[RMDB]
RNA sequence: GGGAACGACUCGAGUAGAGUCGAAAAGGCCGUGGCUGGCUGCGCUCCGAGCUGCGGAGUCCGGGACUGGAGCUGCCCGGGCGGGUUCGCGCCCCGAAGGCUGAGAGCUGGCGCUGCUCGUGCCCUGUGUGCCAGACGGCGGAGCUCCGCGGCCGGAUACGAUUAUGCAUUUCGAUGCAUAAUCGUAAAAAGAAACAACAACAACAAC
Reactivity to 2A3 in 0.01 (KOAc 150mM, MgCl2 10mM, bicine 150mM(pH8.5), 24C), signal-to-noise 1, nucleotides 027 to 156: g000g020c030c010g020u030g050g040c110u070g010g020c020u050g080c080g010c030u000c000c020g020a080g000c010u020g000c020g010g000a010g010u000c000c000g010g000g020a000c020u010g090g020a050g090c000u050g060c080c000c050g000g000g000c000g020g000g010u040u070c090g000c000g000c000c000c000c000g140a110a100g080g000c070u070g080a140g000a020g240c130u170g030g000c030g000c010u030g010c020u000c010g120u130g110c000c010c040u080g070u010g000u050g090c020c000a030g020a000c060g030g130c030g030g000a000g050c000u010c000c000g000c000g000g000c020c000g000g000a030